[RMDB]
RNA sequence: GGGAACGACUCGAGUAGAGUCGAAAAGAUAUGGAACGGAAGCAAUCUGAAGAAAUAAGCUUGGACCGUACGGUUUCGGAAACGAAAUUACGCUAGCUUAUUUCUUCAGAUUGCCCGUUCCUAAGUCGAUCACCAGGAAGUUCGCUUCCUGGUGAUCAAAAGAAACAACAACAACAAC
Reactivity to DMS in 0.01 (KOAc 150mM, MgCl2 10mM, bicine 150mM(pH8.5), 24C), signal-to-noise 1, nucleotides 027 to 126: g000a150u050a300u000g020g010a030a010c000g000g000a260a120g040c010a030a010u000c000u000g010a030a020g050a000a000a000u000a000a000g010c010u000u000g030g000a090c300c050g010u010a030c300g060g000u000u000u010c010g000g010a150a150a180c000g050a000a030a000u000u000a020c040g030c050u010a000g040c000u010u000a000u000u000u000c000u000u000c000a000g010a000u000u000g000c000c000c000g000u000u000c000c000u000a000a030g020u000c020
Structure probing data (DMS) for a 177-nucleotide construct.
The RNA was probed in 150 mM KOAc, 10 mM MgCl2 and 150 mM bicine (pH 8.5) at 24 C.
The DMS profile rests on 664 reads.